[RMDB]
RNA sequence: GGGAACGACUCGAGUAGAGUCGAAAAGAGGCUUCCAUAAAGCCAAGACUAGACCCACGUGUAGAAGCACUUCUACCACGUUCAUCCAUAACGUCAGAGUAUACUGGCGAAGCCGUGGGGUGAAAUAAUAAGACCAGGAAAGCAUUCUAUGGUACUACACUAGCAAUUGCUUCGGCGAUUGCUGGUGAAAAGAAACAACAACAACAAC
Reactivity to DMS in 0.01 (KOAc 150mM, MgCl2 10mM, bicine 150mM(pH8.5), 24C), signal-to-noise 3, nucleotides 027 to 156: g000a200g000g000c000u000u000c050c200a110u010a100a090a100g020c000c010a050a130g000a130c060u000a060g010a080c020c000c150a040c020g010u000g020u010a020g010a020a040g030c160a110c100u000u000c030u020a040c040c040a030c010g010u000u000c040a130u000c040c050a090u010a090a190c050g000u000c000a000g020a300g040u010a190u010a080c030u000g010g010c010g010a150a100g010c050c070g000u000g030g010g030g000u010g000a040a060a090u020a080a110u010a080a100g000a100c010c030a060g000g010a090a090a140g030c070a100u000u000c050u010a080u010g020g000u000a090c030u000a160
Reactivity to 2A3 in 0.01 (KOAc 150mM, MgCl2 10mM, bicine 150mM(pH8.5), 24C), signal-to-noise 6, nucleotides 027 to 156: g130a060g000g000c010u070u000c090c070a210u260a130a060a010g000c000c000a000a030g040a030c020u040a030g060a060c000c030c020a010c020g050u070g000u010a020g010a040a020g040c110a060c130u020u000c010u020a030c030c070a020c020g040u060u050c010a030u020c030c000a060u050a140a040c000g000u010c020a010g020a030g130u170a080u060a220c020u020g000g000c000g030a030a010g050c070c070g040u060g020g000g000g000u020g050a060a070a010u180a050a030u100a130a020g020a020c020c000a010g060g000a050a030a030g120c070a110u080u030c050u100a250u070g020g000u030a100c030u030a010
The data come from the RNA Mapping Database (RMDB), library OK3TST. Chemical mapping of a 207-nucleotide RNA with DMS and 2A3. 2A3 adducts were read by reverse transcription with SuperScript II with manganese.